RNA sequence: GGGAACGACUCGAGUAGAGUCGAAAACGACCACCUGACGGGUCGGACAUAGCGUCAGGAUCAUCCGUGGCAGUCACCACGGUAAUCAUGUGCCUGAUGAUGGUUUUCCAUCUUAAUCUGACUGAGUCGUAGCAGUCUACAGUACUAUGACAUUAGAGCGUAGCGUGGUAUUCGUACCACGCUACGCAAAAGAAACAACAACAACAAC
Reactivity to 2A3 in 0.01 (KOAc 150mM, MgCl2 10mM, bicine 150mM(pH8.5), 24C), signal-to-noise 1, nucleotides 027 to 156: c060g010a000c000c000a000c000c000u000g000a020c000g010g000g010u060c010g130g000a150c240a160u090a040g040c000g000u000c030a000g000g010a020u110c060a030u020c010c020g000u010g000g040c050a050g090u000c010a000c010c020a000c000g040g000u000a000a000u000c030a060u160g110u230g120c000c000u050g020a020u020g000a000u030g030g000u010u000u000u190c050c000a010u000c000u010u080a110a160u100c100u070g040a020c000u030g000a000g000u000c000g000u000a000g010c010a020g070u060c150u140a050c010a020g010u020a040c000u010a000u000g030a000c000a000u080u300a030g000a010
Chemical mapping of a 207-nucleotide RNA with 2A3. 2A3 adducts were read by reverse transcription with SuperScript II with manganese. Source: RMDB library OK3TST, as collected in RNAgym.